An RNA of 207 nucleotides, treated with 2A3 and read out base by base. Conditions: 150 mM KOAc, 10 mM MgCl2 and 150 mM bicine (pH 8.5), 24 C.
RNA sequence: GGGAACGACUCGAGUAGAGUCGAAAAGAUUGAAACAGAUGGAGAUACACAAAUGUUUGAAUCCCAGUAACAAAAAUCCUGGUAUCUCGGGUAUACAGUAGUGCAGAUACUGUAUUUUUAAUGCUCCUUAGGUUUUCCAUCUUCGGAUGGAAAACAACGCUAAGGUACGAUUCGUCGUACCUUAGCGAAAAGAAACAACAACAACAAC
Reactivity to 2A3 in 0.01 (KOAc 150mM, MgCl2 10mM, bicine 150mM(pH8.5), 24C), signal-to-noise 1, nucleotides 027 to 156: g010a010u100u110g040a000a010a000c000a000g080a120u040g000g000a030g010a020u040a000c020a000c010a010a110a060u000g020u010u050u230g050a060a020u050c040c040c010a000g150u140a170a130c100a150a100a000a000a030u070c020c020u000g000g000u000a000u000c010u000c000g000g000g030u020a000u000a000c000a000g020u010a000g040u020g300c080a030g110a260u010a000c010u000g000u000a000u010u000u000u040u030a120a080u070g030c050u080c060c040u070u170a040g150g030u000u000u000u000c000c000a000u000c020u010u000c080g140g030a000u000g010g000a010a010a000a000c000a010a000
For 2A3 the reverse transcriptase was SuperScript II with manganese.